[RMDB]
RNA sequence: GGGAACGACUCGAGUAGAGUCGAAAAGUUGUGGCCUUUAGGCCAGACAAAAACGCAGGUGAUGCCUAGAAGCCAACUAGUUGCCGUUUGGUUAUCUGUAGGGUUGUGGCCUUGCCAAACAGGAAAACUCCUGUACGACUUUCGAGUCGUACAGGAGAAAAGAAACAACAACAACAAC
Reactivity to DMS in 0.01 (KOAc 150mM, MgCl2 10mM, bicine 150mM(pH8.5), 24C), signal-to-noise 1, nucleotides 027 to 126: g000u000u000g040u010g020g040c000c040u010u000u000a080g010g040c010c040a060g030a070c040a080a050a050a130a140c240g040c200a060g030g030u000g020a080u010g030c050c000u000a100g020a100a010g000c030c050a010a080c080u000a080g000u020u010g020c080c030g000u010u050u010g020g030u000u000a060u010c040u000g000u000a050g010g010g000u000u000g010u030g000g030c010c040u000u000g010c040c010a070a070a070c140a120g020g000a130a090a110a180